[RMDB]
RNA sequence: GGGAACGACUCGAGUAGAGUCGAAAACAUAAUGACUUCGGUCAUUAUGAAAUAAAGGGAGUCGAGUGCGCGCGGCACAGUCACGCGCUGACGCCACGACAAAAAUCGGGACCUUCGGGUCCCGAAACUAAUAUAAGACCUUCGGGUCUUAUAUUAGAAAAGAAACAACAACAACAAC
Reactivity to 2A3 in 0.01 (KOAc 150mM, MgCl2 10mM, bicine 150mM(pH8.5), 24C), signal-to-noise 2, nucleotides 027 to 126: c000a020u000a020a000u000g020a000c000u020u020c270g070g000u010c000a000u010u000a000u010g010a020a030a040u180a030a080a020g090g020g030a080g020u010c030g030a060g140u030g000c000g010c000g000c010g010g010c030a040c100a250g080u080c010a020c050g020c010g020c030u020g020a020c010g000c010c030a160c070g020a010c060a000a220a010a010a020u020c000g000g010g010a000c000c000u040u050c230g070g000g000u040c000c000c000g000a000a010a010
Reactivity to DMS in 0.01 (KOAc 150mM, MgCl2 10mM, bicine 150mM(pH8.5), 24C), signal-to-noise 2, nucleotides 027 to 126: c010a000u000a010a010u000g000a010c000u000u010c200g030g000u000c000a010u010u000a000u000g000a050a070a060u010a050a120a160g000g000g010a060g020u010c000g020a140g020u010g010c050g020c030g010c020g020g000c020a110c140a090g000u010c040a070c060g010c000g030c000u010g000a050c050g010c000c010a070c030g010a050c070a040a030a060a130a070u000c020g000g000g000a020c000c000u010u010c200g020g040g020u000c000c000c000g000a010a010a040